[RMDB]
RNA sequence: GGGAACGACUCGAGUAGAGUCGAAAACAUGGAUCGUUCGCGAUCCAUGGCAGGUGGUGGUGGGACCAGCCGACCCAGGCAUUUGGCAUCCCAGCCUUUCCAAUCCAGCCUAUUUCGAUAGGCUGAAAGCAAAUACCGAAUUCGUUCGGUAUUUGCUAAAAGAAACAACAACAACAAC
Reactivity to DMS in 0.01 (KOAc 150mM, MgCl2 10mM, bicine 150mM(pH8.5), 24C), signal-to-noise 2, nucleotides 027 to 126: c010a000u000g010g000a020u000c000g010u010u020c180g040c000g000a000u000c000c010a000u010g000g010c160a050g020g030u000g000g030u020g000g010u000g010g000g010a110c020c040a060g000c020c000g000a120c120c090c090a200g000g000c030a120u000u010u010g000g010c080a090u000c010c000c010a090g000c010c020u000u000u000c020c020a110a140u030c120c010a010g010c000c000u000a000u000u000u000c230g000a010u000a000g010g000c020u000g010a020a070
Reactivity to 2A3 in 0.01 (KOAc 150mM, MgCl2 10mM, bicine 150mM(pH8.5), 24C), signal-to-noise 2, nucleotides 027 to 126: c010a010u010g000g000a000u010c030g000u120u080c250g000c010g140a000u000c000c000a000u000g000g000c050a040g030g100u110g020g060u080g030g190u080g020g010g000a020c000c020a000g000c000c020g080a160c030c050c040a040g000g000c030a040u090u110u230g020g000c050a050u070c000c000c000a000g040c010c000u020u030u010c010c000a020a040u080c020c020a000g000c010c000u000a000u010u140u060c140g040a000u010a000g000g010c010u050g010a030a010